Source information: The record gives the reactivity of an RNA of 177 nucleotides to 2A3 and DMS.
[RMDB]
RNA sequence: GGGAACGACUCGAGUAGAGUCGAAAAACAUACGGCACUCAGUUUACACUUACAUUACAUAUGCAUUUUAACACAUCAACUAUAACACCUUUAUUUAAGUCUGUUGUGGACCAUAGAAUAUGGUAAAUCACAAUUGAUAGUUCGCUAUCAAUUGUGAAAAAGAAACAACAACAACAAC
Reactivity to 2A3 in 0.01 (KOAc 150mM, MgCl2 10mM, bicine 150mM(pH8.5), 24C), signal-to-noise 5, nucleotides 027 to 126: a000c020a040u130a030c030g030g000c020a020c050u030c040a030g020u030u060u070a040c050a010c020u050u070a010c000a090u050u070a010c010a030u120a040u130g060c030a060u040u070u060u120a050a010c030a010c000a040u050c010a010a060c020u030a030u010a160a020c040a060c030c000u060u130u040a150u090u230u060a130a030g020u000c070u050g010u020u000g010u010g020g040a010c000c010a010u020a040g280a230a070u160a050u070g010g000u020a040a040a050
Reactivity to DMS in 0.01 (KOAc 150mM, MgCl2 10mM, bicine 150mM(pH8.5), 24C), signal-to-noise 3, nucleotides 027 to 126: a070c100a060u020a100c090g010g030c050a060c050u000c060a060g020u000u010u000a080c060a070c050u000u010a060c090a050u000u000a050c070a050u000a060u000g010c040a040u000u010u000u000a050a080c060a040c090a040u000c050a050a070c020u010a070u000a080a050c070a050c100c030u000u000u010a080u020u010u000a060a080g010u000c080u000g010u000u010g010u010g000g010a080c020c010a040u000a080g010a070a080u000a070u000g000g000u000a080a080a190
Annotation:
Conditions: 150 mM KOAc, 10 mM MgCl2 and 150 mM bicine (pH 8.5), 24 C. The DMS profile rests on 2,804 reads.